[RMDB]
RNA sequence: GGGAACGACUCGAGUAGAGUCGAAAAGAUAUGGAAUAGGACGGGAGAAUGUCGGAAACGACCAUUCUUUGAUCGUCUAUUCCUAAGUCAAAAGCUGCCGGAUAGUGUUCGCACUAUCCGGCAGCAAGAAGAAAGUAUAGUUCGCUAUACUUUCUUCAAAAGAAACAACAACAACAAC
Reactivity to 2A3 in 0.01 (KOAc 150mM, MgCl2 10mM, bicine 150mM(pH8.5), 24C), signal-to-noise 1, nucleotides 027 to 126: g010a000u060a020u100g000g030a050a010u020a080g140g040a030c020g010g000g010a010g000a000a000u000g010u000c000g000g050a060a040a040c000g010a020c010c160a000u010u000c000u140u050u060g160a220u200c040g040u030c020u020a000u000u030c000c000u000a070a030g030u050c000a000a000a030a250g000c030u020g050c000c130g000g000a010u050a040g000u040g140u160u140c300g030c180a010c000u020a040u040c060c000g000g070c080a020g000c000a030a000
Reactivity to DMS in 0.01 (KOAc 150mM, MgCl2 10mM, bicine 150mM(pH8.5), 24C), signal-to-noise 3, nucleotides 027 to 126: g010a040u000a300u000g000g010a000a010u000a030g000g010a020c010g010g000g010a000g000a010a000u000g010u000c000g000g010a060a080a190c020g000a020c240c150a010u000u000c000u000u000u010g010a110u020c000g010u000c000u000a020u000u010c000c000u010a020a130g000u010c030a110a100a130a180g010c000u000g010c000c000g020g000a020u010a030g000u020g000u000u010c250g010c010a000c000u000a010u000c010c000g000g020c000a000g010c010a010a020